[RMDB]
RNA sequence: GGGAACGACUCGAGUAGAGUCGAAAAGAUAUGGAUGUACUGUAGAGUUAAGUUGCUCUUCGGAAACGAAGAGCUACGCUCUAGAGCUACAUCCUAAGUCAAACUACUAUAGUUCGCUAUAGUAGAAGCUGAUAUCCUUGUUCGCAAGGAUAUCAGCAAAAGAAACAACAACAACAAC
Reactivity to 2A3 in 0.01 (KOAc 150mM, MgCl2 10mM, bicine 150mM(pH8.5), 24C), signal-to-noise 2, nucleotides 027 to 126: g040a010u060a040u130g000g000a000u010g020u010a010c020u050g120u300a000g010a010g040u090u190a270a040g010u070u140g030c000u020c000u020u020c000g010g040a010a130a090c030g000a000a000g000a000g000c000u010a000c000g000c000u000c000u000a030g020a000g070c050u010a000c000a010u000c010c000u010a090a010g010u000c040a050a040a100c000u020a010c010u000a000u000a010g030u030u090c300g000c150u000a000u010a010g000u020a000g020a030a030
Reactivity to DMS in 0.01 (KOAc 150mM, MgCl2 10mM, bicine 150mM(pH8.5), 24C), signal-to-noise 1, nucleotides 027 to 126: g020a030u010a300u000g000g010a000u000g000u000a000c000u000g000u020a000g000a020g020u000u000a210a160g020u000u000g000c000u000c000u000u000c000g010g000a120a060a220c050g070a000a010g000a030g000c000u000a010c050g010c010u000c000u000a010g000a010g020c240u000a000c000a000u000c000c000u010a000a030g010u000c030a170a140a200c000u000a000c010u000a000u000a030g000u000u010c240g000c000u000a010u000a020g020u000a010g000a090a040